The record gives the reactivity of an RNA of 207 nucleotides to 2A3. Conditions: 150 mM KOAc, 10 mM MgCl2 and 150 mM bicine (pH 8.5), 24 C.
RNA sequence: GGGAACGACUCGAGUAGAGUCGAAAACAUCGAUUCGUCGAUGCGAGAUACCUUUGUGCCUUAGGGAGCUACUAGUACAGGAGGCCCAUUGGGCUACCCACCCUGGACCGUAGCGAAGAACUAAGGCACUCUGGUUUUUAAUGUACUUCGGUACAAAGCCGACUGUAUCGUUCGCGAUACAGUCGGCAAAAGAAACAACAACAACAAC
Reactivity to 2A3 in 0.01 (KOAc 150mM, MgCl2 10mM, bicine 150mM(pH8.5), 24C), signal-to-noise 2, nucleotides 027 to 156: c010a000u000c010g050a000u020u170c260g050u010c000g100a020u000g140c060g060a170g060a090u230a030c000c010u000u000u000g000u000g000c000c020u020u010a000g000g000g000a000g000c000u000a000c020u030a000g000u010a020c020a000g000g000a000g020g000c020c020c010a300u210u300g030g010g010c020u090a080c020c060c000a050c000c000c000u000g000g000a010c000c030g000u000a000g000c000g020a090a000g000a000a000c000u000a010a010g000g000c000a000c000u000c000u000g000g060u020u000u000u090u200a150a120u030g000u010a000c030u050u080c290g000g000u020a000c000a130a050a020